[RMDB]
Source: RMDB library TTRINS, as collected in RNAgym. Chemical mapping of a 177-nucleotide RNA with 2A3 and DMS.
RNA sequence: GGGAACGACUCGAGUAGAGUCGAAAAGAUAUGGAGCUCUAAAGAGCUGAUGACCCAUACGUAGUCUGAUGGUCGGAAACGACCAUCAGAUCAAGUAUGGCAAGGCUCGAUUGGAGCUCCUAAGUCACCUAAACAGAAACUUCGGUUUCUGUUUAGGAAAAGAAACAACAACAACAAC
Reactivity to 2A3 in 0.01 (KOAc 150mM, MgCl2 10mM, bicine 150mM(pH8.5), 24C), signal-to-noise 1, nucleotides 027 to 126: g030a000u090a070u220g030g010a030g010c000u020c010u020a080a060a040g000a010g000c000u010g040a160u110g020a050c000c000c000a000u000a020c030g120u090a000g040u000c010u000g020a010u010g010g000u000c040g020g040a160a070a050c010g010a000c040c010a030u000c000a000g000a000u010c000a010a000g000u000a010u000g000g000c010a120a160g000g000c000u000c030g010a040u050u160g020g000a010g000c010u010c000c000u000a000a010g000u000c020a040
Reactivity to DMS in 0.01 (KOAc 150mM, MgCl2 10mM, bicine 150mM(pH8.5), 24C), signal-to-noise 3, nucleotides 027 to 126: g030a080u000a300u010g000g010a020g000c010u010c000u010a020a110a300g000a020g000c000u000g000a030u000g010a200c300c000c000a010u000a000c000g010u010a300g000u000c000u020g000a000u000g000g000u020c000g000g000a050a090a100c000g010a010c000c010a010u000c000a000g000a000u000c030a300a300g000u000a000u000g010g000c040a030a070g010g010c010u000c030g000a230u000u010g000g000a020g000c000u000c000c000u000a010a040g000u000c000a210

For 2A3, 3,988 sequencing reads were counted. For 2A3 the reverse transcriptase was SuperScript II with manganese. Reactivities are given for positions 27 through 126.